[RMDB]
RNA sequence: GGGAACGACUCGAGUAGAGUCGAAAAAUAAGCCUACUAUGGUUGAUAUACAGCAGUUUUUGUUUUGCUUUGAAGUUACUGAUAAAUACUUUGAGCAGUAUGAUGGUGGUUGUAUCCCUGCUAAUCAAGUUGUAGUAACUAAUUUAGAUAAGAGUGCUGAUCCUCAAUGAUUCGUCAUUGAGGAUCAAAAAGAAACAACAACAACAAC
Reactivity to 2A3 in 0.01 (KOAc 150mM, MgCl2 10mM, bicine 150mM(pH8.5), 24C), signal-to-noise 2, nucleotides 027 to 156: a000u010a000a020g010c020c020u020a060c030u050a120u200g080g000u080u100g090a010u060a000u050a110c120a040g060c070a050g000u000u000u000u090u090g110u060u060u140u070g000c040u060u120u180g040a010a000g030u000u030a020c030u010g060a080u060a170a130a020u020a100c000u080u000u170g030a010g080c040a030g030u140a060u120g080a010u050g030g050u030g100g010u040u060g060u050a060u000c040c000c000u000g010c060u060a050a090u040c050a050a000g010u060u010g010u040a040g010u010a020a000c050u030a010a300u040u150u150a080g030a120u070a160a070g000a000g030u070g000c040
Reactivity to DMS in 0.01 (KOAc 150mM, MgCl2 10mM, bicine 150mM(pH8.5), 24C), signal-to-noise 2, nucleotides 027 to 156: a120u000a040a090g030c030c000u010a110c050u000a070u000g020g020u000u000g010a090u010a110u000a130c050a060g030c040a110g030u000u020u010u000u000g010u000u000u000u000g010c020u000u010u020g030a080a040g050u000u000a300c070u000g000a180u000a060a060a090u010a040c020u000u010u010g010a090g020c040a070g000u000a010u010g010a090u000g020g050u020g040g030u020u000g000u000a100u000c060c020c010u010g000c020u010a050a120u000c010a040a100g010u000u010g000u000a070g020u000a020a070c020u000a070a130u000u000u000a090g010a170u000a040a110g010a120g010u010g000c160

Chemical mapping of a 207-nucleotide RNA with 2A3 and DMS. For 2A3, 668 sequencing reads were counted. The DMS profile rests on 3,641 reads. Conditions: 150 mM KOAc, 10 mM MgCl2 and 150 mM bicine (pH 8.5), 24 C. Reactivities are given for positions 27 through 156. Source: RMDB library OK3TST, as collected in RNAgym.